[RMDB]
RNA sequence: GGGAACGACUCGAGUAGAGUCGAAAAGCAACGCAAAGCCGCGGCAAGUGGAGAUAGCGAGAAGAGACUAGGCUUUGGUUUCUUCAAGUGAAGCGGUCACCAAUCAGGUGUGGUAGUUACCGUAAAAAUAACCGCUCUUUGUUCGCAAAGAGCGGAACUUACUCUAUUCGUUCGCGAAUAGAGUAAGAAAAGAAACAACAACAACAAC
Reactivity to 2A3 in 0.01 (KOAc 150mM, MgCl2 10mM, bicine 150mM(pH8.5), 24C), signal-to-noise 5, nucleotides 027 to 156: g030c030a030a040c070g010c060a080a060a020g040c010c020g030c030g050g030c080a100a070g050u070g080g050a070g020a090u100a030g040c050g010a030g010a060a000g010a010g000a010c020u040a050g070g160c040u150u110u100g000g010u010u010u010c000u010u000c010a040a030g020u030g080a080a020g020c010g000g010u030c010a010c030c010a030a110u130c060a050g030g070u050g020u040g080g050u050a060g030u050u100a030c010c010g040u080a050a080a030a020a010u120a090a060c000c000g000c000u000c000u010u010u010g030u030u070c180g010c090a000a000a000g000a000g000c000g000g000a000a000
Reactivity to DMS in 0.01 (KOAc 150mM, MgCl2 10mM, bicine 150mM(pH8.5), 24C), signal-to-noise 3, nucleotides 027 to 156: g030c030a050a100c050g000c030a060a100a130g020c020c040g020c030g000g000c090a070a090g010u000g000g020a130g030a080u000a220g020c010g010a300g010a070a020g000a070g000a030c010u000a080g020g010c110u000u010u020g030g000u000u000u010c010u010u000c000a100a300g010u010g000a100a140g010c010g040g000u000c040a050c020c030a060a100u010c090a110g020g010u000g020u020g030g010u010a040g010u000u010a050c030c040g020u000a000a060a080a090a110u000a080a240c010c000g030c010u000c000u000u000u010g000u000u010c300g040c010a010a020a050g030a010g020c010g030g010a010a030